[RMDB]
RNA sequence: GGGAACGACUCGAGUAGAGUCGAAAAAUGGGCAUGCGAAAGGAUGGAGUCGGAUGGGAAAGCAUGCUAUCCGACGUACGGAAACCAUCCUGUAUGUUCGAUCGCCGGCGGCACGGAUGGGAAAGCAUGCACAACCGUACGGAAACCAUCCCAUAACACCCUAGACAGAAUUCGUUCUGUCUAGGGUAAAAGAAACAACAACAACAAC
Reactivity to 2A3 in 0.01 (KOAc 150mM, MgCl2 10mM, bicine 150mM(pH8.5), 24C), signal-to-noise 3, nucleotides 027 to 156: a000u100g040g030g010c030a030u050g000c040g110a140a050a060g010g000a020u040g000g020a040g030u050c000g000g000a010u040g010g030g010a110a200a060g070c060a030u140g040c010u010a040u000c010c010g020a040c070g080u170a030c000g020g030a060a020a060c010c000a000u000c010c000u000g020u040a100u110g010u060u170c010g000a100u120c060g080c150c040g030g020c010g000g000c040a040c200g000g010a010u010g000g000g050a060a100a040g010c000a000u020g030c010a000c030a000a080c000c010g040u050a000c000g040g060a120a000a000c010c000a030u030c000c000c010a030u050a110a040c040
Reactivity to DMS in 0.01 (KOAc 150mM, MgCl2 10mM, bicine 150mM(pH8.5), 24C), signal-to-noise 1, nucleotides 027 to 156: a080u000g000g000g000c050a050u000g010c020g010a050a120a060g000g000a110u010g010g030a160g000u010c010g050g040a060u000g020g060g000a160a140a150g000c060a080u010g030c000u000a020u000c030c000g000a030c070g020u010a090c050g000g000a140a070a100c030c010a020u000c020c000u000g050u010a040u000g020u000u000c000g000a150u000c180g020c070c040g000g030c020g000g000c040a050c090g000g020a090u000g000g010g000a150a050a120g000c010a000u000g000c030a100c050a030a140c000c000g020u000a110c040g000g020a050a090a090c020c000a090u000c000c000c050a070u000a100a070c190